[RMDB]
RNA sequence: GGGAACGACUCGAGUAGAGUCGAAAAUUGUUAAGAUAUUUGUUAACCCUAGCAUGGAGGAUGACACAGAAGGGCAAGUACUUAUAGGUAUGAUUUCAUCUGUAAACAACGUAGGUAGUUAUGGCAAGGUAGUGGUUAUUUUCGAAUAACCACUACCAAAAGAAACAACAACAACAAC
Reactivity to 2A3 in 0.01 (KOAc 150mM, MgCl2 10mM, bicine 150mM(pH8.5), 24C), signal-to-noise 2, nucleotides 027 to 126: u120u020g020u030u030a060a080g050a160u060a130u090u160u060g090u050u110a080a070c000c000c010u000a030g090c040a100u050g050g010a000g050g000a040u050g020a020c030a000c000a090g060a030a060g010g010g020c030a020a040g020u000a010c010u080u090a050u060a160g040g050u040a040u100g050a110u060u090u020c000a080u010c010u030g080u030a160a050a000c020a030a020c080g030u010a030g030g050u030a020g020u160u040a040u120g020g000c030a020a070
Reactivity to DMS in 0.01 (KOAc 150mM, MgCl2 10mM, bicine 150mM(pH8.5), 24C), signal-to-noise 3, nucleotides 027 to 126: u000u010g000u000u000a060a120g040a140u010a070u000u000u000g010u000u000a070a150c030c030c000u000a110g020c060a060u000g000g000a090g000g010a060u000g010a090c140a040c030a040g000a050a040g000g010g010c060a050a140g010u000a060c060u000u010a090u010a080g020g010u000a040u000g010a190u010u000u020c050a070u000c030u000g010u000a070a050a060c080a040a070c080g010u000a040g010g000u000a060g010u000u000a050u000g010g010c150a070a100

Chemical mapping of a 177-nucleotide RNA with 2A3 and DMS. For 2A3, 1,098 sequencing reads were counted. Conditions: 150 mM KOAc, 10 mM MgCl2 and 150 mM bicine (pH 8.5), 24 C. For DMS, 2,803 sequencing reads were counted.